Structure probing data (DMS and 2A3) for a 177-nucleotide construct. Source: RMDB library TTRDEL, as collected in RNAgym. 2A3 adducts were read by reverse transcription with SuperScript II with manganese. DMS adducts were read by reverse transcription with MarathonRT. The 2A3 profile rests on 6,701 reads. The reactions ran in a buffer of 150 mM KOAc, 10 mM MgCl2 and 150 mM bicine (pH 8.5), at 24 C.
RNA sequence: GGGAACGACUCGAGUAGAGUCGAAAAGAUAUGGACUCUCCGAGGAUCGUAGCGUAACAUCCAUCGGAAACGAUGGUGGCUACGGGAGGAGGGUCCUAAGUCAAAGCCGAUAGUUCGCUAUCGGCAACAUCAUUGACACCUUCGGGUGUCAAUGAUGAAAAGAAACAACAACAACAAC
Reactivity to DMS in 0.01 (KOAc 150mM, MgCl2 10mM, bicine 150mM(pH8.5), 24C), signal-to-noise 3, nucleotides 027 to 126: g000a050u000a300u010g000g000a010c010u000c000u000c000c010g000a110g000g000a070u010c000g000u000a000g010c010g010u010a010a030c220a020u020c000c000a000u000c000g020g000a140a070a140c020g000a010u000g000g030u010g000g000c000u000a000c010g010g000g010a020g000g000a010g000g000g000u000c000c010u000a000a050g010u000c040a070a160a230g000c000c000g000a010u000a000g020u000u020c230g020c010u000a000u000c000g000g000c010a010a030
Reactivity to 2A3 in 0.01 (KOAc 150mM, MgCl2 10mM, bicine 150mM(pH8.5), 24C), signal-to-noise 2, nucleotides 027 to 126: g020a010u080a040u150g010g000a000c010u000c000u000c000c010g050a300g010g000a010u020c000g010u000a010g000c030g040u060a030a020c030a250u150c010c000a010u010c020g030g050a090a040a030c000g010a010u010g010g020u000g000g000c000u000a010c010g020g000g000a000g000g000a000g010g010g000u000c000c000u000a020a000g030u010c030a010a130a000g010c000c000g010a000u010a000g010u050u090c300g000c160u000a010u010c000g020g000c000a000a000